Structure probing data (DMS and 2A3) for a 177-nucleotide construct. For DMS, 9,856 sequencing reads were counted. Reactivities are rounded to 0.1 and cut off at 0 and 3. For 2A3, 7,006 sequencing reads were counted. It was measured as part of the RMDB library OK1LIB. DMS adducts were read by reverse transcription with MarathonRT. Conditions: 150 mM KOAc, 10 mM MgCl2 and 150 mM bicine (pH 8.5), 24 C.

RNA sequence: GGGAACGACUCGAGUAGAGUCGAAAAGGUGAAGCACAACGUAUUCGAUUGGCAACGCAAAUUGGGUCGCGUUUGACUGGUGUCUUAUAUGUAUUAGAUGAGCCAUCAAUUGGACUGCAUCAAAGAGGAAAAUACUAAGCUUCGGCUUAGUAUUUUCAAAAGAAACAACAACAACAAC
Reactivity to DMS in 0.01 (KOAc 150mM, MgCl2 10mM, bicine 150mM(pH8.5), 24C), signal-to-noise 5, nucleotides 027 to 126: g010g010u010g000a070a120g020c060a070c050a070a080c070g000u020a060u030u010c040g020a050u000u020g000g000c020a050a090c140g000c090a030a060a060u020u010g000g010g030u000c080g010c030g010u010u000u000g010a070c060u000g010g010u000g010u010c040u000u020a060u010a100u040g010u040a090u030u020a070g010a030u000g000a080g000c030c000a000u020c160a020a140u010u000g000g010a050c040u020g020c030a030u000c050a050a030a080g000a160g020
Reactivity to 2A3 in 0.01 (KOAc 150mM, MgCl2 10mM, bicine 150mM(pH8.5), 24C), signal-to-noise 9, nucleotides 027 to 126: g080g010u080g050a070a020g030c030a030c020a140a070c050g020u080a090u110u140c050g090a130u070u130g060g000c040a070a040c060g000c060a020a040a110u130u110g050g020g030u070c060g020c040g070u040u040u060g060a070c040u030g000g040u030g030u030c020u060u080a110u010a040u180g200u060a170u110u090a090g040a060u030g050a010g010c000c000a020u040c020a060a080u090u030g050g000a080c010u080g040c060a020u030c080a050a090a040g170a060g150